[RMDB]
RNA sequence: GGGAACGACUCGAGUAGAGUCGAAAAGAGGAUAACUGAACAUGCACAGUUUAGUGUACGCUUUAGGAACACACUAUUAAAUGGAAUCGUAGAAAAAAUUGGGAAAAUGCGUAUUGCCUACAGUCAGUCCACAUCCUAAGUUCGCUUAGGAUGUGGAAAAAGAAACAACAACAACAAC
Reactivity to DMS in 0.01 (KOAc 150mM, MgCl2 10mM, bicine 150mM(pH8.5), 24C), signal-to-noise 3, nucleotides 027 to 126: g010a060g010g050a070u000a090a100c040u000g010a010a050c030a090u030g030c060a090c120a070g000u000u000u000a050g020u000g020u000a080c110g010c060u010u000u020a060g030g000a150a100c120a030c130a070c040u000a040u010u010a040a080a070u010g030g010a020a050u000c090g010u000a070g020a000a040a040a040a040a130u020u000g010g000g000a040a060a040a080u000g000c020g020u000a010u000u010g000c020c010u020a090c110a030g020u000c100a090g010
Reactivity to 2A3 in 0.01 (KOAc 150mM, MgCl2 10mM, bicine 150mM(pH8.5), 24C), signal-to-noise 2, nucleotides 027 to 126: g120a000g040g010a050u040a130a030c040u000g040a000a030c030a120u230g000c070a050c030a060g030u020u050u080a040g010u040g030u040a010c030g000c060u020u020u160a060g010g030a080a000c060a000c000a000c050u070a050u240u130a130a210a090u100g080g030a020a050u060c030g000u070a050g080a020a130a010a020a030a070u210u120g040g020g000a030a150a040a010u040g000c000g000u010a040u020u120g080c000c000u040a050c010a020g060u030c010a020g070